[RMDB]
RNA sequence: GGGAACGACUCGAGUAGAGUCGAAAAAGACAAGGCUGCCAAUAUGGAAUACUGGUUUAUUGAAGGUCACCGUUGUAACAGUCUCUCACAAAACUGGUUCCUGUAUCAAGCCACACAUGGAACCCUGAGAAUACGUCCAAUUCGUUGGACGUAUUCUAAAAGAAACAACAACAACAAC
Reactivity to 2A3 in 0.01 (KOAc 150mM, MgCl2 10mM, bicine 150mM(pH8.5), 24C), signal-to-noise 2, nucleotides 027 to 126: a000g050a020c040a060a020g010g030c020u010g030c050c010a080a070u070a060u130g030g010a080a080u050a230c030u050g010g110u070u130u100a120u070u220g090a070a030g000g010u010c040a010c030c020g100u070u050g060u070a040a010c010a010g000u040c000u000c000u000c020a070c060a030a120a080a090c070u030g030g000u000u030c000c020u030g010u020a070u160c030a000a070g080c060c010a030c000a000c020a110u090g010g000a020a030c000c010c000u100g050
Reactivity to DMS in 0.01 (KOAc 150mM, MgCl2 10mM, bicine 150mM(pH8.5), 24C), signal-to-noise 4, nucleotides 027 to 126: a090g020a140c100a120a070g030g000c020u000g010c070c070a080a150u000a050u010g000g010a100a110u010a070c050u000g010g000u000u000u010a100u010u000g020a120a120g010g010u000c090a090c030c040g000u000u000g000u010a060a100c060a040g000u000c030u000c060u000c040a100c170a060a040a020a100c160u010g010g000u000u000c000c010u000g010u010a090u010c090a050a060g020c060c050a090c120a040c050a050u000g020g000a030a060c020c010c220u000g020
Structure probing data (2A3 and DMS) for a 177-nucleotide construct. For DMS, 2,827 sequencing reads were counted. The data come from the RNA Mapping Database (RMDB), library OK2TST. The reactions ran in a buffer of 150 mM KOAc, 10 mM MgCl2 and 150 mM bicine (pH 8.5), at 24 C. As a SHAPE reagent, 2A3 marks flexible, mostly unpaired nucleotides at the ribose 2'-OH.